Description
This 207-nucleotide RNA was probed chemically with DMS and 2A3. Reactivities are rounded to 0.1 and cut off at 0 and 3. 2A3 adducts were read by reverse transcription with SuperScript II with manganese. For DMS, 7,906 sequencing reads were counted. The data come from the RNA Mapping Database (RMDB), library OK3TST. Conditions: 150 mM KOAc, 10 mM MgCl2 and 150 mM bicine (pH 8.5), 24 C. High 2A3 reactivity points to a flexible backbone, as in loops and unpaired stretches. Values cover nucleotides 27 to 156.
RNA sequence: GGGAACGACUCGAGUAGAGUCGAAAAUUAAGGCUUAGAGGCUCAUUCUCUGCUGUAGGGGUGACAAAAGCAUGCCCACAGGGUCUUCUGGAGACUUACGUAAAAUGAUAAAAGUACCUAAGCACAGUACCUGGCACAACCCAGGCUUGUCACUCACUAACUAGAGAUUAUUCGUAAUCUCUAGUUAAAAAGAAACAACAACAACAAC
Reactivity to DMS in 0.01 (KOAc 150mM, MgCl2 10mM, bicine 150mM(pH8.5), 24C), signal-to-noise 3, nucleotides 027 to 156: u010u010a090a110g020g010c030u000u000a120g020a080g010g030c050u060c010a090u000u010c020u000c020u000g040c030u000g030u010a100g000g010g060g010u010g000a300c010a030a090a040a070g000c060a080u000g010c000c020c030a110c050a100g020g020g000u000c060u000u000c050u010g020g010a160g020a180c040u010u000a030c060g020u000a050a060a070a140u010g000a140u000a050a070a070a160g000u000a050c020c020u000a040a050g010c020a070c030a070g020u000a050c010c010u000g000g000c060a060c090a070a100c070c020c000a070g000g020c040u000u010g020u000c010a080c030u000c000a110c160
Reactivity to 2A3 in 0.01 (KOAc 150mM, MgCl2 10mM, bicine 150mM(pH8.5), 24C), signal-to-noise 4, nucleotides 027 to 156: u100u040a080a020g030g000c010u030u110a030g030a060g070g030c020u010c040a070u160u040c030u010c020u060g070c030u030g050u150a060g000g020g000g000u030g030a030c030a030a150a000a000g050c020a030u120g030c000c040c000a090c020a010g040g010g020u040c000u060u030c020u150g060g040a080g020a120c010u050u040a010c030g030u020a000a080a090a140u150g080a080u070a160a120a010a020g040u050a050c010c020u030a030a020g000c020a010c010a060g030u060a070c010c000u030g030g000c110a050c030a210a060c000c010c020a000g000g020c000u020u040g010u000c010a000c020u010c000a080c080